Overview:
An RNA of 177 nucleotides, treated with 2A3 and DMS and read out base by base. For DMS, 58,960 sequencing reads were counted.
RNA sequence: GGGAACGACUCGAGUAGAGUCGAAAAUCAAGAGUACAACUGGGAACUAUGAUUGUACUCGGAGUAAAUCAUAGUCGACGAAGUCGAAUACAUGUUACUCAUCUGUCAUGUAUUCCAGUUGACAGAAGAUAGUAUGCACAUUCGUGUGUGUACUAUCAAAAGAAACAACAACAACAAC
Reactivity to 2A3 in 0.01 (KOAc 150mM, MgCl2 10mM, bicine 150mM(pH8.5), 24C), signal-to-noise 9, nucleotides 027 to 126: u100c020a020a030g040a020g040u070a060c000a000a000c000u000g000g010g000a030a010c010u010a010u010g010a020u000u020g130u050a010c020u010c060g010g000a040g000u020a000a010a000u030c000a010u010a000g010u010c000g000a010c040g190a150a020g020u010c010g000a010a000u020a000c010a000u010g010u020u080a030c010u020c060a140u030c050u050g030u010c000a000u000g000u000a040u000u000c000c000a000g000u000u000g010a000c010a010g050a040a000
Reactivity to DMS in 0.01 (KOAc 150mM, MgCl2 10mM, bicine 150mM(pH8.5), 24C), signal-to-noise 9, nucleotides 027 to 126: u040c070a110a080g010a100g010u010a070c000a000a010c000u000g000g010g000a140a100c040u000a010u000g010a030u000u000g010u000a010c020u010c230g010g010a170g000u000a030a020a010u010c030a010u000a010g010u000c000g000a010c000g010a120a090g010u000c020g010a130a000u000a010c020a010u010g010u020u020a030c060u020c260a100u030c170u020g000u000c010a000u000g000u000a030u000u000c000c010a010g010u000u000g010a050c030a090g010a070a110